[RMDB]
Chemical mapping of a 177-nucleotide RNA with 2A3 and DMS.
Values cover nucleotides 27 to 126.
The RNA was probed in 150 mM KOAc, 10 mM MgCl2 and 150 mM bicine (pH 8.5) at 24 C.
RNA sequence: GGGAACGACUCGAGUAGAGUCGAAAAGAGAUAUCGGCCAUGGCGGACAUCAGCCCGCCGUGCGCGAAGCCGUGGUGCUGGCGCAGGUCCUCGCGCAGCGGCACGCGCAAGGUGGCCUGCGAGGGGGGGUACAUCAUUGUUUCGACAAUGAUGUACCAAAAGAAACAACAACAACAAC
Reactivity to 2A3 in 0.01 (KOAc 150mM, MgCl2 10mM, bicine 150mM(pH8.5), 24C), signal-to-noise 3, nucleotides 027 to 126: g060a000g010a000u070a040u270c060g040g000c020c010a020u060g010g000c010g020g000a030c030a200u190c100a110g040c010c000c000g000c000c000g000u020g010c050g010c020g020a030a040g010c020c010g040u050g030g070u080g010c050u050g070g000c070g010c080a070g060g150u130c000c020u060c060g000c000g000c020a020g010c000g030g000c030a010c030g020c010g010c020a020a040g120g000u030g020g010c010c000u000g030c040g030a060g000g000g020g000g000
Reactivity to DMS in 0.01 (KOAc 150mM, MgCl2 10mM, bicine 150mM(pH8.5), 24C), signal-to-noise 6, nucleotides 027 to 126: g020a130g010a140u010a060u010c070g000g010c010c010a040u010g020g020c010g010g010a030c020a150u020c230a150g000c020c000c010g020c000c020g030u000g020c080g000c010g010a090a090g000c020c020g030u010g010g030u010g010c040u000g010g010c020g010c130a100g000g000u000c020c020u000c200g000c000g020c010a100g000c020g000g020c020a190c060g010c010g010c020a060a070g000g000u000g000g000c020c010u000g020c070g000a110g000g000g000g010g010

The 2A3 profile rests on 7,794 reads.